[RMDB]
RNA sequence: GGGAACGACUCGAGUAGAGUCGAAAAAGCAGCCGGCCGCCGGGCAGCACCAGGUCCUCGAUGCUCUGAUGGCCGCCCAGUGCAACCUGAAUGGCAUGCUGGGCCGGGACAUUUGGGCACAACCGCACAUUAUUUCAUCCUUCGGGAUGAAAUAAUGAAAAGAAACAACAACAACAAC
Reactivity to DMS in 0.01 (KOAc 150mM, MgCl2 10mM, bicine 150mM(pH8.5), 24C), signal-to-noise 6, nucleotides 027 to 126: a120g000c060a110g000c010c030g010g000c020c020g010c030c030g000g010g020c040a050g000c040a060c050c030a070g000g010u010c030c020u000c110g010a150u010g000c010u000c010u010g000a030u000g010g000c000c020g020c000c000c010a020g000u000g010c170a160a270c010c030u020g010a110a100u030g010g020c160a120u040g010c000u000g000g010g020c060c090g020g000g010a060c020a010u000u000u000g010g000g020c000a040c110a080a090c080c060g000c170a230
Reactivity to 2A3 in 0.01 (KOAc 150mM, MgCl2 10mM, bicine 150mM(pH8.5), 24C), signal-to-noise 9, nucleotides 027 to 126: a000g040c040a020g020c000c010g030g010c020c020g010c000c000g010g030g000c020a020g020c010a020c020c010a020g000g050u040c010c030u040c070g090a130u040g000c000u000c010u030g020a020u010g030g010c000c000g010c000c010c000a010g010u040g040c070a130a150c010c010u220g180a250a120u220g040g010c070a030u170g010c010u010g000g000g000c060c060g030g000g030a030c000a010u030u040u040g010g000g000c000a010c020a040a030c020c020g010c020a040
Conditions: 150 mM KOAc, 10 mM MgCl2 and 150 mM bicine (pH 8.5), 24 C. Structure probing data (DMS and 2A3) for a 177-nucleotide construct. For 2A3 the reverse transcriptase was SuperScript II with manganese. The DMS profile rests on 16,897 reads.